An RNA of 177 nucleotides, treated with DMS and 2A3 and read out base by base.
The RNA was probed in 150 mM KOAc, 10 mM MgCl2 and 150 mM bicine (pH 8.5) at 24 C.
For DMS, 2,511 sequencing reads were counted.
RNA sequence: GGGAACGACUCGAGUAGAGUCGAAAAACAGGCGUCGAGUGGAGGAGGCGGCGGCAGCAGCGGCCCGGGGGUGGCGGCGCAACGACACGCAGUGGCGAGCGCAAGUGUCGGGACAGCGAGCGCAGGCGCCGGCCGUGUAAUUCGUUACACGGCCGGCAAAAGAAACAACAACAACAAC
Reactivity to DMS in 0.01 (KOAc 150mM, MgCl2 10mM, bicine 150mM(pH8.5), 24C), signal-to-noise 2, nucleotides 027 to 126: a070c090a100g000g010c010g000u020c070g000a090g000u020g020g010a180g000g000a110g000g000c010g030g020c060g020g040c070a100g080c110a080g030c050g020g000c000c030c020g010g030g000g030g010u000g000g030c000g040g000c020g000c060a070a060c050g010a020c040a040c060g040c120a140g020u030g010g000c020g010a110g000c020g000c030a050a110g000u020g010u010c030g000g020g010a120c090a170g010c040g010a110g000c030g000c090a100g060g000c110
Reactivity to 2A3 in 0.01 (KOAc 150mM, MgCl2 10mM, bicine 150mM(pH8.5), 24C), signal-to-noise 3, nucleotides 027 to 126: a000c050a060g040g030c010g020u050c010g010a070g050u110g020g070a080g060g010a030g020g000c030g020g010c000g000g030c010a030g000c010a040g030c080g040g030c000c000c010g000g010g010g000g000u080g030g010c030g030g000c040g000c010a030a100c030g030a000c010a020c060g050c030a040g030u050g080g030c070g010a050g010c010g020c050a130a080g030u050g000u050c020g000g000g040a040c020a010g060c020g050a010g020c090g000c050a030g070g030c030